[RMDB]
RNA sequence: GGGAACGACUCGAGUAGAGUCGAAAAAUGCCGCAUUCAGAGACGGUCACUCUAGUGGGCGACUGUCCAUCUAGCGUUGACAUCUACAUACUAUAUAGUAAUACCAAUACUCAAGACUACGAAACGGAUACUCGCUGAUGUUCGCAUCAGCGAGUAUAAAAGAAACAACAACAACAAC
Reactivity to DMS in 0.01 (KOAc 150mM, MgCl2 10mM, bicine 150mM(pH8.5), 24C), signal-to-noise 1, nucleotides 027 to 126: a080u030g000c090c080g000c170a000u080u000c200a000g000a060g000a000c050g000g030u000c010a010c110u070c000u000a120g110u010g000g000g000c000g000a020c090u080g000u000c000c000a100u100c080u000a020g000c050g000u020u000g050a000c000a170u010c000u010a000c080a120u000a130c030u000a200u040a120u150a020g000u000a040a040u090a140c100c030a000a250u090a010c050u100c140a020a100g010a270c120u000a000c000g000a010a140a070c220g000g000
Reactivity to 2A3 in 0.01 (KOAc 150mM, MgCl2 10mM, bicine 150mM(pH8.5), 24C), signal-to-noise 3, nucleotides 027 to 126: a000u080g020c000c060g060c050a100u010u130c060a000g010a000g010a090c100g090g000u020c000a000c000u020c020u000a020g010u060g000g070g000c040g120a120c170u260g000u130c010c010a060u030c010u010a000g010c010g010u040u200g010a000c020a020u000c020u030a050c050a010u090a020c040u080a000u080a020u090a210g100u080a190a050u010a300c020c030a050a010u060a120c000u000c040a060a040g030a100c000u050a030c130g020a040a060a030c000g000g050